[RMDB]
RNA sequence: GGGAACGACUCGAGUAGAGUCGAAAAGCUCGCGGGCUGAUUCAGUCCUCUAGGGCCCAUGCUAUUGUGGCCCUAACUCGUCACACGGAGAAGUGUGUGGUGGUUGAUGCUCCGGGGCUUCUUCGUGAGACGUGGUAAAAUUCGUUUUACCACGUCUAAAAGAAACAACAACAACAAC
Reactivity to 2A3 in 0.01 (KOAc 150mM, MgCl2 10mM, bicine 150mM(pH8.5), 24C), signal-to-noise 3, nucleotides 027 to 126: g040c020u020c050g140c100g030g040g020c030u030g000a190u300u160c010a030g060u010c010c010u080c080u050a010g010g000g000c010c040c010a050u110g110c130u220a160u300u110g030u280g050g010c000c000c020u020a010a030c000u010c080g140u070c030a020c000a010c040g040g070a070g010a110a030g050u090g020u060g080u110g060g010u080g010g130u120u230g080a080u240g000c010u030c030c020g080g010g050g030c040u040u020c000u010u060c020g010u000g040
Reactivity to DMS in 0.01 (KOAc 150mM, MgCl2 10mM, bicine 150mM(pH8.5), 24C), signal-to-noise 3, nucleotides 027 to 126: g010c020u000c030g040c210g010g020g020c020u000g000a150u010u010c110a050g000u000c020c020u010c160u000a020g000g030g000c020c000c020a030u010g020c270u010a120u000u000g020u010g050g010c000c000c000u000a010a040c100u010c100g000u000c070a250c020a010c010g020g000a070g000a050a090g030u000g010u010g020u010g020g030u000g010g020u010u020g000a140u010g000c030u000c020c020g030g020g000g010c040u000u000c030u000u000c020g010u000g010
Chemical mapping of a 177-nucleotide RNA with 2A3 and DMS. 2A3 adducts were read by reverse transcription with SuperScript II with manganese. Conditions: 150 mM KOAc, 10 mM MgCl2 and 150 mM bicine (pH 8.5), 24 C. As a SHAPE reagent, 2A3 marks flexible, mostly unpaired nucleotides at the ribose 2'-OH. DMS adducts were read by reverse transcription with MarathonRT.